[RMDB]
RNA sequence: GGGAACGACUCGAGUAGAGUCGAAAAUGUGUAUCAAGAACGAAACAAAAAGCGGAUAUAGUCGAAUGGUAAAAUUUCUCUUUGCCAAGGAGAAGACGCGGGUUCGAUUCCCGCUAUCCGCCCAAAAAUUGCGUACUAACUUCGGUUAGUACGCAAUAAAAGAAACAACAACAACAAC
Reactivity to 2A3 in 0.01 (KOAc 150mM, MgCl2 10mM, bicine 150mM(pH8.5), 24C), signal-to-noise 3, nucleotides 027 to 126: u190g070u020g010u000a070u260c060a020a090g020a170a050c070g040a090a070a040c020a070a190a000a010a000g010c000g000g000a000u000a000u020a080g100u070c050g040a050a080u050g030g020u110a010a050a050a060u040u080u020c080u040c010u080u070u110g140c040c060a030a030g030g010a020g040a030a000g060a000c020g000c000g000g010g000u000u010c010g000a000u000u060c000c000c020g000c000u000a010u010c010c000g020c000c000c000a040a170a000a000
Reactivity to DMS in 0.01 (KOAc 150mM, MgCl2 10mM, bicine 150mM(pH8.5), 24C), signal-to-noise 5, nucleotides 027 to 126: u030g030u010g030u000a040u070c050a110a060g010a090a180c120g000a090a060a060c090a030a110a100a210a120g000c000g000g010a000u000a010u000a060g000u000c000g010a000a020u000g010g010u060a000a150a070a010u020u010u000c000u000c000u000u000u030g030c300c230a040a080g000g000a050g000a000a000g000a020c000g000c020g000g010g010u000u020c020g010a300u010u000c000c000c000g020c010u000a000u000c000c000g040c000c080c100a060a010a060a100

Source: RMDB library OK1LIB, as collected in RNAgym. An RNA of 177 nucleotides, treated with 2A3 and DMS and read out base by base. For DMS, 3,508 sequencing reads were counted. 2A3 adducts were read by reverse transcription with SuperScript II with manganese. The reactions ran in a buffer of 150 mM KOAc, 10 mM MgCl2 and 150 mM bicine (pH 8.5), at 24 C.